Structure probing data (2A3) for a 177-nucleotide construct. For 2A3 the reverse transcriptase was SuperScript II with manganese.
RNA sequence: GGGAACGACUCGAGUAGAGUCGAAAACUAUGAUAAUGCUAAUGGUGUUCUUAAAGGUAUUGAACUCAUUGGUGCGUCCAGAGGCUUUAAUACCACCGUUAAAGUAUUCGUAUUUACCAUCGGGCGCGCGGUUACGUUGAUUCGUCAACGUAACCGCAAAAGAAACAACAACAACAAC
Reactivity to 2A3 in 0.01 (KOAc 150mM, MgCl2 10mM, bicine 150mM(pH8.5), 24C), signal-to-noise 1, nucleotides 027 to 126: c030u070a120u120g050a130u040a250a050u120g030c050u040a020a020u000g100g000u040g020u070u200c070u080u160a040a050a070g230g040u050a140u150u000g050a070a030c000u000c000a170u000u110g030g040u060g000c020g020u000c000c000a010g000a020g040g000c000u210u040u000a040a010u000a040c010c060a020c010c070g020u040u040a130a100a020g050u030a160u080u080c040g000u060a160u130u030u040a090c020c020a120u160c120g050g000g000c020g000c040